[RMDB]
RNA sequence: GGGAACGACUCGAGUAGAGUCGAAAAGUCUCCGUGAGGAAGGCAGUCAGAGAAUGGAUUGGGCCCAUACUGGUUCUUUCAUCAUGAUUCUACAUUUGCUCUCCUGUGUGCCCAUGGAAUCACAAGGGAGCAAUAAUAAAUUCGUUUAUUAUUGCUCAAAAGAAACAACAACAACAAC
Reactivity to 2A3 in 0.01 (KOAc 150mM, MgCl2 10mM, bicine 150mM(pH8.5), 24C), signal-to-noise 9, nucleotides 027 to 126: g060u010c010u010c040c010g030u040g040a040g030g020a020a020g020g010c050a000g030u050c030a010g040a010g080a210a070u060g020g040a030u040u080g050g030g020c010c010c020a030u120a110c060u050g020g010u050u030c000u030u060u040c030a110u030c020a030u090g050a130u120u050c050u100a110c020a140u090u090u140g030c010u020c000u010c010c010u030g010u010g020u030g060c010c010c000a040u100g060g070a110a080u100c030a060c040a140a050g100g050
Reactivity to DMS in 0.01 (KOAc 150mM, MgCl2 10mM, bicine 150mM(pH8.5), 24C), signal-to-noise 9, nucleotides 027 to 126: g010u000c020u000c020c030g020u000g010a090g000g010a040a040g010g010c100a050g010u000c070a050g010a110g010a110a040u000g000g000a140u000u010g010g000g010c050c020c090a060u010a090c110u000g010g010u000u000c020u000u000u000c030a070u000c060a050u000g000a100u010u000c070u000a080c130a100u010u000u000g010c020u000c010u000c020c030u000g010u000g010u000g000c090c020c030a100u000g010g010a090a080u000c050a040c090a050a100g000g010